[RMDB]
RNA sequence: GGGAACGACUCGAGUAGAGUCGAAAAGGGACAAUACUGUCUGUAAAGCUUCUAACUCUCAACUCAUUCAGCGUCUGCUUAUUGCAAUAUUCUUGAGAGUGUCAAUUCAGAUGCUCAUGGAGAACAGUGUCGAUUCAAAUUUCGAUUUGAAUCGACAAAAAGAAACAACAACAACAAC
Reactivity to 2A3 in 0.01 (KOAc 150mM, MgCl2 10mM, bicine 150mM(pH8.5), 24C), signal-to-noise 2, nucleotides 027 to 126: g010g000g010a000c020a060a040u080a190c110u050g020u050c000u000g070u100a130a060a020g010c030u060u030c030u120a110a050c010u000c020u020c030a020a050c020u010c050a050u150u070c040a040g000c010g110u010c010u060g030c020u110u100a050u090u020g000c020a050a130u040a130u170u060c040u130u280g060a200g020a030g130u020g050u050c040a040a070u160u040c040a030g010a000u010g000c020u000c000a060u190g100g030a030g000a050a010c040a080g080
Reactivity to DMS in 0.01 (KOAc 150mM, MgCl2 10mM, bicine 150mM(pH8.5), 24C), signal-to-noise 2, nucleotides 027 to 126: g010g010g020a030c020a060a130u030a120c080u010g020u010c030u000g020u000a110a150a150g010c040u000u000c050u020a100a150c060u000c010u000c040a080a120c060u010c020a070u000u010c100a020g030c050g020u000c010u000g020c200u000u000a050u010u010g000c120a050a050u000a080u000u000c050u000u010g010a120g010a020g010u000g000u000c030a100a080u010u000c130a050g000a020u000g010c020u000c090a060u000g000g010a090g000a090a030c140a040g060
Chemical mapping of a 177-nucleotide RNA with 2A3 and DMS.
Values cover nucleotides 27 to 126.
DMS adducts were read by reverse transcription with MarathonRT.
For DMS, 1,366 sequencing reads were counted.
As a SHAPE reagent, 2A3 marks flexible, mostly unpaired nucleotides at the ribose 2'-OH.
For 2A3, 1,139 sequencing reads were counted.